The data come from the RNA Mapping Database (RMDB), library OK2TRN. This 177-nucleotide RNA was probed chemically with DMS. For DMS the reverse transcriptase was MarathonRT. The reactions ran in a buffer of 150 mM KOAc, 10 mM MgCl2 and 150 mM bicine (pH 8.5), at 24 C.
RNA sequence: GGGAACGACUCGAGUAGAGUCGAAAAUGGAGGCCCAAGCAAGGCCGGAACACAUCCCUGCCUUGGUCUCAGGUGUCAAGCACAGUCCCCCAGGACCCCCCAUAUUGGCAGAGAUGUUCAAGGGCCAGCGAUUAUUUAACUUCGGUUAAAUAAUCGCAAAAGAAACAACAACAACAAC
Reactivity to DMS in 0.01 (KOAc 150mM, MgCl2 10mM, bicine 150mM(pH8.5), 24C), signal-to-noise 1, nucleotides 027 to 126: u000g070g000a100g020g020c000c030c010a070a140g000c120a040a120g000g000c040c070g010g000a180a140c200a040c080a070u000c010c020c010u000g020c010c000u000u040g030g000u010c030u010c060a120g030g000u000g000u000c050a080a070g000c150a060c040a120g000u000c000c000c030c030c010a170g000g000a160c020c020c020c020c020c070a090u000a030u000u010g000g020c040a030g000a050g000a070u000g010u010u010c020a120a190g000g000g000c010c040a080